[RMDB]
RNA sequence: GGGAACGACUCGAGUAGAGUCGAAAAUGAACUAUAAUUGUUCAUUGAAGUCAUUGAUGCAAACUCCUUGGUCACACACACAUACGGCGCGGAAGGCGUGUUUGCUGACGUUUCCAUUCCCUUGUUUCAAGAAGACAUAGUUCGCUAUGUCUUCUUGAAAAGAAACAACAACAACAAC
Reactivity to DMS in 0.01 (KOAc 150mM, MgCl2 10mM, bicine 150mM(pH8.5), 24C), signal-to-noise 2, nucleotides 027 to 126: u000g010a010a030c000u000a060u000a140a190u020u000g000u010u000c000a000u010u000g010a040a110g000u010c060a070u000u000g010a100u000g030c050a060a060a050c050u000c020c030u010u010g030g000u000c050a150c090a070c070a050c090a080c070a080u010a100c090g010g020c040g010c040g020g030a120a100g030g020c210g010u000g010u010u010u000g030c000u000g000a300c230g000u000u010u010c010c060a250u000u010c000c010c010u000u000g000u000u000u000
Reactivity to 2A3 in 0.01 (KOAc 150mM, MgCl2 10mM, bicine 150mM(pH8.5), 24C), signal-to-noise 2, nucleotides 027 to 126: u010g000a000a000c030u050a050u170a300a290u290u120g000u060u000c020a010u000u040g060a030a010g050u030c030a060u040u280g030a040u100g030c020a000a000a090c010u050c020c000u030u050g060g000u080c000a040c010a000c000a000c020a000c000a070u090a220c080g010g000c040g020c040g130g110a050a010g060g000c040g020u080g060u010u060u040g040c040u010g020a010c040g000u000u030u010c010c010a020u000u010c020c010c000u070u120g110u080u050u010
An RNA of 177 nucleotides, treated with DMS and 2A3 and read out base by base. The data come from the RNA Mapping Database (RMDB), library RFMREP. For 2A3 the reverse transcriptase was SuperScript II with manganese. For DMS the reverse transcriptase was MarathonRT. The RNA was probed in 150 mM KOAc, 10 mM MgCl2 and 150 mM bicine (pH 8.5) at 24 C.